RNA sequence: GGGAACGACUCGAGUAGAGUCGAAAAGCUAGGCAUUUCGAUGCCUAGCGAGCGCAGAGUCUAUGCAUCUCUGAAUCACACAACAGCCGUGUCUAUCCGUGGGAGUAUCCCUCUUCGGAGGGAUAAAGAUUGUGAUCUACUUCGGUAGAUCACAAUCAAAAGAAACAACAACAACAAC
Reactivity to 2A3 in 0.01 (KOAc 150mM, MgCl2 10mM, bicine 150mM(pH8.5), 24C), signal-to-noise 3, nucleotides 027 to 126: g010c000u000a000g000g000c000a020u030u050u160c220g120a010u000g000c000c000u000a000g010c000g000a040g000c120g000c000a000g000a010g050u060c050u150a120u170g050c030a080u030c010u000c000u040g080a070a070u110c020a030c010a000c030a100a050c020a050g060c010c050g050u030g030u020c030u060a130u050c010c040g060u090g020g050g020a080g010u010a020u010c000c020c000u000c000u020u010c130g080g010a000g010g000g010a000u010a010a000a010
Reactivity to DMS in 0.01 (KOAc 150mM, MgCl2 10mM, bicine 150mM(pH8.5), 24C), signal-to-noise 3, nucleotides 027 to 126: g000c000u000a010g000g000c010a010u010u000u000c220g020a040u000g000c020c000u010a000g010c010g010a060g030c100g030c030a040g010a070g000u000c060u010a080u000g000c150a100u000c010u000c010u010g000a100a090u000c080a060c070a030c100a040a070c100a070g010c020c060g020u000g000u010c050u000a080u010c040c050g010u010g000g000g010a140g010u000a020u000c000c000c000u000c000u000u010c170g020g000a010g010g010g010a010u000a000a060a090
About this RNA
Chemical mapping of a 177-nucleotide RNA with 2A3 and DMS. 2A3 adducts were read by reverse transcription with SuperScript II with manganese.